[RMDB]
RNA sequence: GGGAACGACUCGAGUAGAGUCGAAAACUCUUUCACGGUUACGUCUGUCUCUGGCAGAGCAGACCGUCAGGAGGAAGAGGUCACCAUCUUCACGAAGCCAAAGCCAAAUUCCGCCUUGUCCUGUAAAGCCACUCAUACGAUUCGUCGUAUGAGUGGCAAAAGAAACAACAACAACAAC
Reactivity to 2A3 in 0.01 (KOAc 150mM, MgCl2 10mM, bicine 150mM(pH8.5), 24C), signal-to-noise 2, nucleotides 027 to 126: c020u010c000u010u030u020c020a030c010g050g000u040u080a040c020g010u000c010u010g070u020c020u020c060u300g120g000c090a000g000a000g000c010a020g010a000c000c000g030u010c040a080g040g040a040g080g000a000a050g020a020g000g020u030c000a030c120c000a040u040c010u080u060c050a040c090g050a020a000g000c020c010a140a040a000g020c020c000a030a040a090u040u000c020c000g010c040c020u080u110g040u050c010c000u060g050u140a070a020a050
Reactivity to DMS in 0.01 (KOAc 150mM, MgCl2 10mM, bicine 150mM(pH8.5), 24C), signal-to-noise 1, nucleotides 027 to 126: c010u000c000u110u000u020c070a060c100g010g000u000u030a060c230g000u000c010u000g000u030c030u000c070u070g020g050c270a120g000a110g010c040a040g000a180c000c050g010u030c160a060g060g010a220g070g000a000a040g010a080g020g020u040c060a120c000c000a020u000c070u000u010c000a060c000g000a000a040g020c070c000a050a130a090g000c090c040a050a090a140u000u000c000c000g010c000c000u000u000g020u000c000c000u040g000u000a080a090a160